[RMDB]
RNA sequence: GGGAACGACUCGAGUAGAGUCGAAAAAUUGACUUCGGUCAAUCUAUACCGUAGGAUUACGACGACGCGUGUGGGAGAAUGAGGACUUCGAAAGAGGUCCCAUUCGAAGAACACACGCAUCAGUAAUCCUAAACGGCUCAUAUCAGUUCGCUGAUAAUUUAUACUCAGUGUUCGCACUGAGUAUAAAAAAAGAAACAACAACAACAAC
Reactivity to 2A3 in 0.01 (KOAc 150mM, MgCl2 10mM, bicine 150mM(pH8.5), 24C), signal-to-noise 4, nucleotides 027 to 156: a000u010u000g000a010c020u030u040c290g120g010u000c010a000a000u010c040u130a170u110a110c010c000g020u010a010g010g010a010u000u010a010c140g070a070c100g000a030c030g130c020g000u000g000u000g000g020g010a060g010a010a000u080g010a280g090g000a000c000u000u010c000g060a090a040a060g010a010g000g020u000c000c010c000a000u000u000c000g000a040a000g010a000a010c010a000c000a000c000g000c000a000u000c000a000g010u000a000a000u010c000c000u020a030a010a000c010g010g000c040u040c160a090u120a030u110c020a010g090u140u150c170g020c100u010g040a020u060a130a070
Reactivity to DMS in 0.01 (KOAc 150mM, MgCl2 10mM, bicine 150mM(pH8.5), 24C), signal-to-noise 2, nucleotides 027 to 156: a020u000u010g010a020c000u000u000c300g080g000u000c010a010a030u010c030u000a240u000a040c010c000g030u000a060g050g000a020u000u000a030c020g010a080c180g040a010c010g000c020g060u000g050u010g000g000g000a300g010a040a010u000g010a140g060g000a050c030u000u000c000g040a140a120a300g000a030g000g000u000c000c000c000a040u000u000c020g000a080a120g000a170a140c000a030c010a020c010g000c010a010u000c000a240g000u000a000a020u000c010c000u000a000a040a070c010g030g030c020u010c120a150u000a080u000c040a050g010u000u000c120g000c030u010g000a050u010a050a150